[RMDB]
RNA sequence: GGGAACGACUCGAGUAGAGUCGAAAAACUCGUGCCGUACGCGGCACGAGAAGUCUCCACCUUACUGAAAAUUUCUCCUUGCAAACAGAUAUGACCAGAAGGCAACGCCGCACUACGGUGCGGCGAAGCAGGUGUGUUUUUUCGAAAACACACCUGCAAAAGAAACAACAACAACAAC
Reactivity to 2A3 in 0.01 (KOAc 150mM, MgCl2 10mM, bicine 150mM(pH8.5), 24C), signal-to-noise 1, nucleotides 027 to 126: a010c000u000c000g000u000g000c000c000g000u000a010c300g000c000g060g000c000a000c010g000a050g000a000a000g020u000c010u020c000c000a020c000c000u090u090a150c000u140g100a070a100a070a100u170u140u030c070u070c010c050u060u160g090c020a080a160a010c010a040g080a000u060a090u110g150a090c000c020a040g000a090a000g070g000c000a000a070c020g010c040c000g000c040a010c010u120a020c250g270g000u000g000c100g040g000c010g000a000a020